[RMDB]
RNA sequence: GGGAACGACUCGAGUAGAGUCGAAAACAUACAUUUAGCUUUAGAUCAGCACUGUGGAAUAGAACUUUCAGUGGCAAUGGAAAUGUUCUGUGUCUGUGCUGUCCAGUGUGGUAGCUGCUAGCCACAUGUAGCUAGUAAGCACCUGAAAUGUGGCUAACACCCAGGUCCUAUUCGUAGGACCUGGGUGAAAAGAAACAACAACAACAAC
Reactivity to 2A3 in 0.01 (KOAc 150mM, MgCl2 10mM, bicine 150mM(pH8.5), 24C), signal-to-noise 1, nucleotides 027 to 156: c010a010u220a050c060a060u030u060u070a000g020c010u080u090u160a070g010a080u120c010a000g060c010a000c020u070g130u240g190g080a090a040u110a070g010a000a010c020u000u000u000c090a060g040u100g200g130c080a040a050u070g020g000a060a000a030u200g030u020u000c000u070g020u000g080u000c000u010g000u000g020c040u000g000u000c020c020a160g000u020g110u020g100g020u030a040g000c000u030g000c040u000a000g000c090c020a120c020a110u200g180u240a040g010c000u000a000g020u060a020a020g020c000a010c020c010u000g060a060a070a010u130g010u020g020g000c000u020a040a060